Source information:
The data come from the RNA Mapping Database (RMDB), library OK2TRN. This 177-nucleotide RNA was probed chemically with DMS and 2A3. For 2A3 the reverse transcriptase was SuperScript II with manganese.

[RMDB]
RNA sequence: GGGAACGACUCGAGUAGAGUCGAAAACUUUUUGAUCUAUUGGAUUUUUAUUAACUAGACUUGCACUAACUACUGUUGCACCUUUUCCAUCAAUUUCAGGCUUUUGUCUUAUAAUACAAGCAAGCUGAGAUAGAUGUAGGUUCGCCUACAUCUAUCUAAAAGAAACAACAACAACAAC
Reactivity to DMS in 0.01 (KOAc 150mM, MgCl2 10mM, bicine 150mM(pH8.5), 24C), signal-to-noise 4, nucleotides 027 to 126: c050u000u010u000u000u010g000a070u000c020u020a080u010u000g000g000a030u000u000u010u000u020a080u020u000a070a100c060u000a080g000a070c070u000u000g030c040a060c040u000a070a090c110u010a060c090u010g020u000u000g010c020a050c040c020u000u000u000u020c020c010a100u010c130a080a080u010u010u000c100a120g020g000c010u000u000u010u000g000u010c020u000u000a050u010a100a130u010a180c110a010a030g010c050a040a030g000c030u000g000
Reactivity to 2A3 in 0.01 (KOAc 150mM, MgCl2 10mM, bicine 150mM(pH8.5), 24C), signal-to-noise 4, nucleotides 027 to 126: c000u130u120u010u110u240g040a050u000c050u090a170u120u130g030g010a040u020u090u080u120u110a190u120u210a120a030c040u040a030g050a080c010u020u050g000c010a000c040u020a070a020c020u090a050c010u090g050u050u030g010c010a060c020c020u000u100u030u000c010c020a060u020c030a080a090u060u080u080c020a040g050g000c010u070u090u100u040g010u000c000u020u050a110u050a220a160u160a050c060a020a010g010c010a010a000g020c020u040g010
Overview:
For 2A3, 4,132 sequencing reads were counted.